RNA sequence: GGGAACGACUCGAGUAGAGUCGAAAACAGUGGGCUUAGCCCAGACUUAUGAGAGAGUGGUCACCUCUCAGCCCCUCCACCUUGGGGUGCCCUAUUCGAGGCACUGCAGCUUCGAUAGAAAGGCUAACACUUUAUAAGGGUUCGCCCUUAUAAAGUGAAAAGAAACAACAACAACAAC
Reactivity to DMS in 0.01 (KOAc 150mM, MgCl2 10mM, bicine 150mM(pH8.5), 24C), signal-to-noise 7, nucleotides 027 to 126: c100a130g010u000g020g000g010c010u010u010a110g020c000c000c010a050g010a090c120u000u000a030u010g000a020g000a020g000a040g010u000g020g000u000c060a170c210c000u000c000u000c010a020g000c010c000c000c010u000c170c130a130c160c100u010u000g010g000g010g020u000g010c000c000c000u000a110u000u000c010g010a020g000g010c000a080c180u010g010c230a160g000c000u000u000c010g000a020u000a020g000a060a120a110g000g010c010u000a040a190
Reactivity to 2A3 in 0.01 (KOAc 150mM, MgCl2 10mM, bicine 150mM(pH8.5), 24C), signal-to-noise 4, nucleotides 027 to 126: c030a050g100u080g010g020g000c060u210u210a060g000c020c000c010a000g060a030c030u070u060a030u070g010a000g000a000g000a010g020u060g040g090u110c050a000c010c000u010c000u000c000a010g010c010c000c000c010u030c060c050a190c010c030u040u060g000g000g000g000u020g000c000c000c000u010a030u020u010c010g000a000g010g000c020a030c210u240g030c020a030g000c010u010u000c010g000a000u000a010g040a010a040a000g000g000c000u010a080a000